[RMDB]
This 207-nucleotide RNA was probed chemically with 2A3.
For 2A3 the reverse transcriptase was SuperScript II with manganese.
RNA sequence: GGGAACGACUCGAGUAGAGUCGAAAAAUAGAAAAUUCAAUAGACUUUGUGUUCUAUUCAACCACAAACUGCCACCUAGCUACUUAAUAAGGAAGUAAUAAAAAGAAGGAGAUUUCAGCAAAUCUAAAUAAUGGUGACUUCAGCCAUGCUUUGAGGAGUAAAUGCUAUCGUUCGCGAUAGCAUUUACAAAAGAAACAACAACAACAAC
Reactivity to 2A3 in 0.01 (KOAc 150mM, MgCl2 10mM, bicine 150mM(pH8.5), 24C), signal-to-noise 2, nucleotides 027 to 156: a000u090a060g060a030a130a020a020u290u190c030a020a080u060a050g150a120c030u140u160u110g000u050g000u040u020c000u010a010u040u130c040a070a000c000c010a040c050a080a150a040c030u080g010c010c000a000c010c000u020a040g030c030u060a060c010u110u140a080a090u090a180a000g030g050a020a010g010u130a010a100u130a160a150a020a000a030g030a020a020g100g000a000g000a020u000u110u120c030a010g050c030a080a020a070u010c030u090a070a040a060u180a110a090u050g010g060u020g040a070c060u020u000c030a000g040c000c030a010u030g060c090u050u070u080g050a060g080g000a060
The reactions ran in a buffer of 150 mM KOAc, 10 mM MgCl2 and 150 mM bicine (pH 8.5), at 24 C.